[RMDB]
RNA sequence: GGGAACGACUCGAGUAGAGUCGAAAAAUCUGGAAUUGGAAUCUCCUCGAUCGCAUCUGUCAAGAUGUGCCACAAUUUAUGCUUGACAUUGCCACCGAGAUGUGCAACUGUGUUUUGGGGCAAAUGCCAGGCACUCGUAUUUCGAUACGAGUGCCUGAAAAGAAACAACAACAACAAC
Reactivity to DMS in 0.01 (KOAc 150mM, MgCl2 10mM, bicine 150mM(pH8.5), 24C), signal-to-noise 2, nucleotides 027 to 126: a060u030c050u000g020g010a080a070u030u000g030g000a220a140u000c030u000c030c000u020c130g010a060u000c240g000c010a030u000c070u000g000u020c080a060a060g000a020u000g020u020g000c090c000a090c190a060a100u000u000u010a030u050g000c070u010u000g000a040c010a010u000u000g000c010c060a060c020c060g000a010g000a020u010g020u020g030c050a060a120c120u010g000u000g000u010u000u010u000g000g000g000g000c030a020a090a090u000g030c050
Reactivity to 2A3 in 0.01 (KOAc 150mM, MgCl2 10mM, bicine 150mM(pH8.5), 24C), signal-to-noise 4, nucleotides 027 to 126: a000u040c030u080g030g100a060a140u090u070g080g050a030a040u070c020u040c080c000u020c080g030a040u050c020g000c040a010u010c000u030g150u140c020a030a020g000a040u050g000u060g110c020c020a120c020a110a060u100u190u160a200u290g060c030u020u040g010a010c020a040u050u060g030c010c020a160c050c020g000a000g010a060u060g070u060g070c100a140a090c150u100g020u000g050u090u010u040u020g000g040g000g030c000a050a060a090u090g030c020